[RMDB]
RNA sequence: GGGAACGACUCGAGUAGAGUCGAAAAACCGGCGAGUACACCGGAAUUGCCAGGACGACCGGGUCCUUUCUUGGAUUAACCCGCUCAAUGCCUGGAGAUUUGGGCGUGCCCCCGCGAGACUGCUAGCCAUGUAAUUUGUAUUCGUACAAAUUACAUGAAAAGAAACAACAACAACAAC
Reactivity to DMS in 0.01 (KOAc 150mM, MgCl2 10mM, bicine 150mM(pH8.5), 24C), signal-to-noise 9, nucleotides 027 to 126: a110c060c010g020g020c110g010a100g020u010a040c050a070c010c010g000g010a040a030u000u020g010c010c010a020g000g010a070c090g000a020c150c010g010g000g000u000c010c010u000u030u030c110u030u010g010g000a200u020u020a160a060c010c010c000g020c300u000c010a120a080u030g010c010c000u000g000g000a080g000a030u010u000u000g010g010g010c050g020u000g000c010c020c050c020c010g000c060g000a080g000a140c070u000g010c050u010a090g010c190
Reactivity to 2A3 in 0.01 (KOAc 150mM, MgCl2 10mM, bicine 150mM(pH8.5), 24C), signal-to-noise 9, nucleotides 027 to 126: a010c010c000g010g010c060g020a050g020u040a020c030a030c020c010g030g030a020a030u040u050g060c000c000a010g000g010a030c040g010a010c020c000g020g000g010u040c010c000u090u210u130c140u130u170g030g000a030u120u100a070a070c000c000c000g000c010u010c020a070a110u250g040c000c000u000g020g000a030g000a010u040u050u070g140g000g000c030g000u030g000c000c010c010c000c000g010c030g010a050g040a050c060u100g030c030u080a020g050c020
This 177-nucleotide RNA was probed chemically with DMS and 2A3. Conditions: 150 mM KOAc, 10 mM MgCl2 and 150 mM bicine (pH 8.5), 24 C. For 2A3 the reverse transcriptase was SuperScript II with manganese. The data come from the RNA Mapping Database (RMDB), libraries RFM100 and RFMREP. 2A3 is a SHAPE reagent: it acylates the 2'-hydroxyl of flexible nucleotides of all four kinds.